RNA sequence: GGGAACGACUCGAGUAGAGUCGAAAAAUUCCCAGAGAGAAUCGAGAGAAAACUGGCUCUCCCUUAGCCAUCCGAGUGGACGUUCGUCCUCCUACGGAUGCCCAGGUCGGACCGCGAGGAGGUGGAGAAGGGGGACAGUUCGCUGUCCCCAAAAGAAACAACAACAACAAC
Reactivity to 2A3 in 0.01 (KOAc 150mM, MgCl2 10mM, bicine 150mM(pH8.5), 24C), signal-to-noise 4, nucleotides 027 to 129: a000u010u000c000c000c000a000g030a000g000a010g010a060a110u140c080g000a000g010a000g030a040a120a030a070c040u040g030g000c000u000c000u020c000c010c010u060u090a030g040c010c030a020u020c000c000g010a020g010u040g000g020a030c050g080u090u100c070g000u110c010c030u020c020c000u110a100c000g010g000a010u040g030c000c000c000a010g060g040u020c010g010g020a030c000c010g020c030g010a020g010g010a040g020g000u060g000g040a060g030a010a050g050
Reactivity to DMS in 0.01 (KOAc 150mM, MgCl2 10mM, bicine 150mM(pH8.5), 24C), signal-to-noise 2, nucleotides 027 to 129: a190u000u000c000c010c000a110g050a140g000a040g020a000a000u030c110g010a100g020a000g020a050a080a050a080c130u050g000g000c110u010c010u000c040c010c110u010u000a080g020c000c000a070u030c000c000g010a090g000u000g050g030a040c000g050u000u000c080g000u020c000c000u030c040c040u080a090c000g010g010a020u000g020c090c080c070a060g050g030u050c050g030g020a040c000c070g000c020g020a100g020g000a070g050g040u060g020g000a120g030a040a060g050
Source information:
Structure probing data (2A3 and DMS) for a 170-nucleotide construct. As a SHAPE reagent, 2A3 marks flexible, mostly unpaired nucleotides at the ribose 2'-OH. Conditions: 150 mM KOAc, 10 mM MgCl2 and 150 mM bicine (pH 8.5), 24 C. The 2A3 profile rests on 8,848 reads. It was measured as part of the RMDB library 15KLIB. 2A3 adducts were read by reverse transcription with SuperScript II with manganese. For DMS, 11,659 sequencing reads were counted.